[RMDB]
RNA sequence: GGGAACGACUCGAGUAGAGUCGAAAACCAUGCGAUGACCAUGCCAGGUUAUUGCGGGGCACCACUCAUCUCCAAUGACAAAGCUGCAGAAAAAGUCCUAGGCAUACACAUGGCCAGCAAUGGCGCAACUAUUAGGUACUUUCGAGUACCUAAUAGUAAAAGAAACAACAACAACAAC
Reactivity to DMS in 0.01 (KOAc 150mM, MgCl2 10mM, bicine 150mM(pH8.5), 24C), signal-to-noise 9, nucleotides 027 to 126: c010c000a120u010g030c020g010a020u000g010a030c010c010a100u010g010c210c160a130g000g010u000u000a020u000u000g020c020g020g000g000g000c090a060c050c030a060c060u010c060a070u000c030u000c030c040a070a090u010g010a060c070a060a100a110g000c040u000g000c040a050g010a040a070a060a070a080g000u000c020c030u000a080g010g000c040a040u000a070c130a050c100a080u010g010g010c010c010a050g010c190a060a090u000g010g010c030g010c190a090
Reactivity to 2A3 in 0.01 (KOAc 150mM, MgCl2 10mM, bicine 150mM(pH8.5), 24C), signal-to-noise 7, nucleotides 027 to 126: c010c000a020u090g010c010g030a030u030g020a020c000c010a050u130g110c050c040a060g000g020u020u010a020u020u040g010c010g000g010g010g000c030a030c030c000a040c020u050c020a100u020c030u000c020c020a060a130u100g020a060c030a020a140a020g030c030u040g010c040a040g100a070a090a020a020a000g030u000c010c010u030a040g020g010c010a030u060a080c070a010c010a090u110g090g000c000c000a000g020c020a030a140u040g010g000c040g010c040a020